[RMDB]
RNA sequence: GGGAACGACUCGAGUAGAGUCGAAAACAGGCGUUGCAGGUGUGGCUGCUGUGUCACAUGUGUGUCAGUAGGUGGCAGAGAGGAGAGAGGCUAUGUCUACGCUCAGUGUUCUGACCUGUGAACAUCUCAUUACAAUUGCUUUCGAGCAAUUGUAAUGAAAAGAAACAACAACAACAAC
Reactivity to 2A3 in 0.01 (KOAc 150mM, MgCl2 10mM, bicine 150mM(pH8.5), 24C), signal-to-noise 9, nucleotides 027 to 126: c020a010g050g000c030g090u090u110g000c020a020g010g050u030g010u030g050g020c010u050g030c030u060g080u040g020u090c010a020c030a100u140g100u030g010u020g040u150c020a030g030u040a030g030g070u030g030g000c040a020g020a000g010a020g160g020a040g000a010g010a010g070g000c010u040a030u120g050u020c020u030a030c030g010c040u050c050a040g020u030g040u110u030c030u050g120a150c000c020u050g010u020g050a020a010c030a090u050c020u000
Reactivity to DMS in 0.01 (KOAc 150mM, MgCl2 10mM, bicine 150mM(pH8.5), 24C), signal-to-noise 6, nucleotides 027 to 126: c050a100g000g000c100g010u010u000g010c040a040g010g030u010g010u010g010g000c010u010g020c090u010g020u020g010u010c030a030c040a100u010g020u000g010u000g010u000c040a060g020u010a070g000g010u010g010g010c040a050g000a090g000a080g020g000a080g010a070g010a090g000g020c040u010a060u010g000u000c020u000a070c100g000c060u010c040a080g010u020g010u000u010c020u000g010a120c060c040u010g010u000g000a050a060c100a080u010c090u000